[RMDB]
Structure probing data (2A3) for a 207-nucleotide construct. Source: RMDB library M2RFPK, as collected in RNAgym. Conditions: 150 mM KOAc, 10 mM MgCl2 and 150 mM bicine (pH 8.5), 24 C. 2A3 adducts were read by reverse transcription with SuperScript II with manganese. The 2A3 profile rests on 889 reads.
RNA sequence: GGGAACGACUCGAGUAGAGUCGAAAAACGAGCGCGCCACUACGGUGGAGCGCUCGAUGGAAGUAGAGACCAGUAACUACUCAAAUAAACGGGUAUAACUAAAAAACCUUAAGAGUAAGGUGUAAAAAAUACGCGUUCUAGUUCGCUAGAACGCGAACAGCUGUACAUAGUUCGCUAUGUACAGCUGAAAAGAAACAACAACAACAAC
Reactivity to 2A3 in 0.01 (KOAc 150mM, MgCl2 10mM, bicine 150mM(pH8.5), 24C), signal-to-noise 2, nucleotides 027 to 156: a030c030g000a010g010c000g000c000g040c000c010a010c000u030a060c190g100g000u000g000g000a000g010c000g020c000u000c000g000a000u000g060g100a130a070g000u020a010g010a010g030a190c050c090a080g000u060a010a090c000u010a000c020u110c230a140a040a050u100a070a000a050c070g010g030g000u130a110u100a250a120c090u130a020a050a150a050a120a120c010c000u010u080a180a000g080a020g170u040a060a020g030g000u000g030u110a060a100a030a000a010a000u150a090c010g000c010g000u000u030c000u010a010g010u000u020c080g000c100u000a000g000a000a000c000g000c000g000a000a000